Annotation: This 207-nucleotide RNA was probed chemically with 2A3. Values cover nucleotides 27 to 156.
[RMDB]
RNA sequence: GGGAACGACUCGAGUAGAGUCGAAAACAUUCUUGAAAAAGUGAUGUAGAUUUAUAGCCCAUAACUUUUUUGAAUUACAUCGACGAUACGGCGUCGAAAGAAAAAUAAAUAGAGCGUAUGAAAGAAAAAAACAACAGUAGCUUCGGCUACUGUUGAAGUUAGGAGUAACGUUCGCGUUACUCCUAACAAAAGAAACAACAACAACAAC
Reactivity to 2A3 in 0.01 (KOAc 150mM, MgCl2 10mM, bicine 150mM(pH8.5), 24C), signal-to-noise 1, nucleotides 027 to 156: c000a010u030u000c020u010u060g010a020a030a080a010a070g040u060g000a040u040g020u020a070g020a140u010u220u130a110u130a120g000c000c000c000a020u110a010a100c110u010u060u000u000u000u140g090a110a090u130u060a090c040a090u020c010g000a000c000g010a010u000a090c050g030g010c030g170u000c020g000a000a000a000g040a000a070a010a000a010u190a020a060a000u070a040g140a010g050c020g020u110a020u070g090a000a100a050g040a070a060a020a000a020a000a000c010a000a000c000a000g000u000a000g010c000u040u010c200g020g000c010u010a000c000u000g000u010u000g000a000a000

The 2A3 profile rests on 760 reads.